[RMDB]
The record gives the reactivity of an RNA of 177 nucleotides to 2A3 and DMS. Source: RMDB library OK1LIB, as collected in RNAgym. Conditions: 150 mM KOAc, 10 mM MgCl2 and 150 mM bicine (pH 8.5), 24 C. For DMS, 1,908 sequencing reads were counted. Reactivities are given for positions 27 through 126.
RNA sequence: GGGAACGACUCGAGUAGAGUCGAAAAAGACCACGACGUCGAUAGGUGGCGUGUGGAAGUGUGGUAACACAUGAAGCUAAGCCAUACUAAUAGCUCGAUCGGCUUGAUCGCUCCUAACUAGCGGCAACAUCCGACACAUCUUCGGAUGUGUCGGAUGAAAAGAAACAACAACAACAAC
Reactivity to 2A3 in 0.01 (KOAc 150mM, MgCl2 10mM, bicine 150mM(pH8.5), 24C), signal-to-noise 5, nucleotides 027 to 126: a000g080a030c030c010a040c110g120a010c000g010u010c010g050a120u090a080g150g020u070g020g010c030g020u030g000u020g010g020a140a110g020u020g000u010g020g090u210a190a010c020a000c030a120u260g070a030a020g020c020u080a060a090g010c010c010a020u060a090c050u030a030a100u030a120g050c030u030c030g060a170u010c040g030g050c010u040u050g020a030u040c010g000c030u050c000c010u060a110a110c020u050a020g080c000g030g000c010a040a060
Reactivity to DMS in 0.01 (KOAc 150mM, MgCl2 10mM, bicine 150mM(pH8.5), 24C), signal-to-noise 2, nucleotides 027 to 126: a070g030a090c010c020a090c020g010a010c120g000u000c010g010a100u040a090g000g120u010g030g000c020g010u060g020u030g000g000a090a050g020u020g000u030g060g010u060a090a110c050a070c060a080u070g010a210a230g000c080u000a070a180g010c000c000a030u030a070c210u040a060a010u040a080g000c060u000c040g000a130u000c040g000g010c060u020u030g000a080u010c010g050c000u000c000c010u000a090a040c280u000a050g030c000g010g010c040a080a080